[RMDB]
An RNA of 207 nucleotides, treated with 2A3 and read out base by base.

RNA sequence: GGGAACGACUCGAGUAGAGUCGAAAAAUCUCUCCGGAGCAGAAAUAGAACAGACGUGGCCGGGGAAAGCCAAAUAUUUCCUGCCGUCCUGGUGAACACAAUCGAGCAAGGCAGUGAAGCAAACAUCAUUAGGUGGCUGGACUCAGACACAUCACGAUAGUCAGCUGAUAUUCGUAUCAGCUGACUAAAAAGAAACAACAACAACAAC
Reactivity to 2A3 in 0.01 (KOAc 150mM, MgCl2 10mM, bicine 150mM(pH8.5), 24C), signal-to-noise 2, nucleotides 027 to 156: a000u000c010u030c000u000c010c000g040g060a020g000c020a040g160a060a160a030u090a060g090a140a060c060a020g240a060c030g060u040g040g160c020c020g080g000g070g000a000a060a000g020c020c040a000a100a010u190a110u020u070u000c010c010u030g040c020c030g050u110c000c000u000g000g010u130g090a180a000c070a000c000a110a060u200c060g000a000g160c060a140a010g070g060c020a010g060u030g170a040a000g020c000a090a020a000c030a110u180c020a020u110u080a060g040g030u020g030g040c010u020g030g020a080c060u080c160a000g020a020c070a000c000a100u150c140a030c160g180a000
Source information: The RNA was probed in 150 mM KOAc, 10 mM MgCl2 and 150 mM bicine (pH 8.5) at 24 C. For 2A3, 565 sequencing reads were counted.